[RMDB]
RNA sequence: GGGAACGACUCGAGUAGAGUCGAAAAAACAAACAUCAAAUCGCAUAGCAAAGAGUCAAAAAAAUAGAGAGCUUUGCGAGACCUACCAAGGGUGAAGAGUUACCAUCCAAGGAGCUGAAGAGAAAUCGAGAGCUCACGGCGUUCGCGCCGUGAGCAACGACCAUAUAAGGUUCGCCUUAUAUGGUCGAAAAGAAACAACAACAACAAC
Reactivity to 2A3 in 0.01 (KOAc 150mM, MgCl2 10mM, bicine 150mM(pH8.5), 24C), signal-to-noise 1, nucleotides 027 to 156: a000a000c170a080a060a030c120a130u180c040a030a180a030u060c020g000c000a020u060a020g010c010a000a290a000g050a050g070u090c040a120a250a110a180a180a110a000u230a020g090a020g030a020g010c010u110u010u010g010c020g000a000g000a040c000c000u010a080c050c040a030a020g060g000g020u050g060a040a010g130a030g080u040u060a040c000c000a000u010c000c040a030a050g060g020a010g030c070u080g080a070a020g040a000g050a030a100a060u070c030g050a060g000a030g240c030u000c010a000c000g010g080c070g010u080u170c130g020c000g000c040c000g000u140g010a000g000c000a020a000